[RMDB]
RNA sequence: GGGAACGACUCGAGUAGAGUCGAAAACCUAUCCAAAAUGAGAUCCCAUCUUGCACACUGUGCUAAUUUGAAAUUCUCAUGCCUCCUACUUGGAGAGAUCUGGACUAGAAGUCAGGGCAUCUGACUCAAUACAUUCGUCAGUUCGCUGACGAAUGAACUAUUGUACUACCUUCGGGUAGUACAAUAGAAAAGAAACAACAACAACAAC
Reactivity to 2A3 in 0.01 (KOAc 150mM, MgCl2 10mM, bicine 150mM(pH8.5), 24C), signal-to-noise 9, nucleotides 027 to 156: c010c000u000a060u050c020c020a060a030a010a100u030g000a010g000a030u040c030c030c000a010u010c040u020u040g000c010a020c030a080c200u270g000u010g010c040u120a060a090u040u030u070g080a080a070a060u110u010c010u000c010a020u050g030c010c000u010c010c010u100a280c120u140u250g010g000a020g000a010g010a040u040c070u090g010g020a020c030u040a070g040a130a000g050u000c000a010g040g050g180c080a130u110c060u010g000a000c000u010c030a020a080u080a120c000a000u000u000c000g000u000c000a000g010u020u090c210g020c100u000g000a000c000g000a000a000u000g000a010a010
Reactivity to DMS in 0.01 (KOAc 150mM, MgCl2 10mM, bicine 150mM(pH8.5), 24C), signal-to-noise 4, nucleotides 027 to 156: c020c010u000a080u000c030c040a030a070a140a130u000g010a040g000a080u010c020c030c000a070u000c120u000u000g040c020a040c020a210c160u000g050u000g020c020u010a030a110u000u020u010g010a040a020a020u000u000c020u000c000a040u000g000c040c000u000c010c000u000a140c190u000u010g000g010a050g000a120g010a060u010c050u010g020g010a150c140u000a110g000a060a050g020u000c010a020g020g030g000c120a100u000c020u010g000a030c010u030c040a060a090u000a130c030a040u000u000c000g020u000c010a010g020u000u010c300g030c010u000g000a030c000g010a020a010u000g000a060a180